RNA sequence: GGGAACGACUCGAGUAGAGUCGAAAAAGUACGUACCUAGGCAGACGUACCUGGAUCACGUCAUGAUCUCGAUGAUCCGAUCAGUAGCAGGAUCCUAGCGUGAGUACGCUAGCACUAGCAUGCACUACGAAUCGGACACCUUCGGGUGUCCGAUUCGAAAAGAAACAACAACAACAAC
Reactivity to 2A3 in 0.01 (KOAc 150mM, MgCl2 10mM, bicine 150mM(pH8.5), 24C), signal-to-noise 1, nucleotides 027 to 126: a000g040u030a020c010g020u120a120c020c050u060a060g030g120c000a060g040a040c010g000u020a020c000c020u080g000g010a030u030c030a020c030g120u040c090a130u140g080a130u060c050u060c080g290a260u080g030a030u000c000c010g000a110u110c100a130g060u060a020g000c060a010g070g040a010u020c000c020u010a030g000c010g000u010g230a160g060u130a010c060g000c010u000a010g120c040a040c070u040a060g000c020a080u020g060c030a030c100u140a100
Reactivity to DMS in 0.01 (KOAc 150mM, MgCl2 10mM, bicine 150mM(pH8.5), 24C), signal-to-noise 1, nucleotides 027 to 126: a050g000u000a020c070g000u000a100c080c010u000a070g000g020c120a150g000a060c130g020u000a040c010c110u010g000g020a040u010c000a050c110g020u010c130a160u020g000a050u010c060u010c010g010a210u000g000a030u000c010c060g010a060u010c050a110g000u000a040g020c110a080g000g020a060u000c060c060u000a050g030c020g030u000g020a190g020u000a010c060g010c020u000a080g000c170a070c050u010a110g010c100a080u000g020c000a050c050u000a080